Structure probing data (DMS and 2A3) for a 177-nucleotide construct. The DMS profile rests on 1,603 reads. As a SHAPE reagent, 2A3 marks flexible, mostly unpaired nucleotides at the ribose 2'-OH. Conditions: 150 mM KOAc, 10 mM MgCl2 and 150 mM bicine (pH 8.5), 24 C. For 2A3, 2,263 sequencing reads were counted. For DMS the reverse transcriptase was MarathonRT. DMS (dimethyl sulfate) methylates the pairing face of unpaired adenines and cytosines.

RNA sequence: GGGAACGACUCGAGUAGAGUCGAAAAAUGAACAUAAAGUUUUGGAGAAUAUUUACAACAGGAGUCUUGUAGAUCCACUUUUUGUAGGAGGUAAUUGUCAAGGAGAUGUUUGUAAAACAAUUCACCCGCCUGAUAUCAAUUUCGAUUGAUAUCAGGCAAAAGAAACAACAACAACAAC
Reactivity to DMS in 0.01 (KOAc 150mM, MgCl2 10mM, bicine 150mM(pH8.5), 24C), signal-to-noise 1, nucleotides 027 to 126: a140u040g000a190a030c070a100u000a020a120a160g000u000u000u000u020g000g050a130g010a040a040u040a040u000u000u000a040c000a040a030c030a080g010g030a280g010u020c000u000u000g010u000a160g000a060u000c010c030a080c030u000u020u010u070u020g010u010a090g000g000a010g010g000u000a070a050u030u030g010u010c000a040a020g000g000a050g000a110u000g010u040u030u010g000u000a010a030a020a050c100a050a040u010u000c000a050c030c030c230
Reactivity to 2A3 in 0.01 (KOAc 150mM, MgCl2 10mM, bicine 150mM(pH8.5), 24C), signal-to-noise 5, nucleotides 027 to 126: a000u110g040a060a010c040a040u300a120a160a060g030u040u050u100u110g060g010a090g030a070a030u050a080u080u010u040a020c010a010a000c030a070g090g060a160g180u040c000u040u000g020u050a020g010a070u020c000c000a030c020u110u170u080u120u170g130u130a050g010g070a080g010g040u100a180a130u070u030g130u150c010a010a000g030g000a150g030a060u060g020u010u070u010g030u050a030a010a020a020c040a030a080u050u010c010a040c020c010c010